[RMDB]
RNA sequence: GGGAACGACUCGAGUAGAGUCGAAAAAGGGUAAAGCUGAUGUUGACGGCCAGCUUGUCGACAUCAAGCAUGUUGUCAUCCAAGGCACAAAAGCUAAACCUCUCACCAGAGUGGCAGCUGAACAAUAGCCUGAUUUUAUAUUCGUAUAAAAUCAGGCAAAAGAAACAACAACAACAAC
Reactivity to DMS in 0.01 (KOAc 150mM, MgCl2 10mM, bicine 150mM(pH8.5), 24C), signal-to-noise 4, nucleotides 027 to 126: a090g010g000g010u010a080a130a130g010c010u000g000a040u000g000u000u000g020a040c020g020g010c070c130a090g020c050u000u000g020u000c010g010a000c000a000u000c010a020a060g010c030a090u000g030u000u010g010u000c010a060u000c050c080a150a090g020g000c020a030c080a090a060a090a050g000c020u000a060a180a140c070c020u000c020u000c060a130c290c160a110g010a030g000u000g010g030c100a040g000c010u000g010a070a040c180a060a100u010a130
Reactivity to 2A3 in 0.01 (KOAc 150mM, MgCl2 10mM, bicine 150mM(pH8.5), 24C), signal-to-noise 2, nucleotides 027 to 126: a000g100g000g050u100a100a020a050g000c000u010g000a000u000g000u010u010g000a000c040g020g040c070c020a050g060c050u130u170g020u000c000g010a010c010a030u010c030a010a030g000c000a000u060g010u080u070g000u040c010a030u020c080c000a030a090g030g000c020a010c020a040a110a040a000g000c010u070a010a080a070c000c000u010c000u010c030a080c060c050a030g000a010g070u010g010g000c030a010g000c010u070g040a180a050c070a150a150u080a150
The record gives the reactivity of an RNA of 177 nucleotides to DMS and 2A3. DMS adducts were read by reverse transcription with MarathonRT. The data come from the RNA Mapping Database (RMDB), library OK2TST. The reactions ran in a buffer of 150 mM KOAc, 10 mM MgCl2 and 150 mM bicine (pH 8.5), at 24 C. In probing experiments dimethyl sulfate is read out at A N1 and C N3, which are open when not base-paired.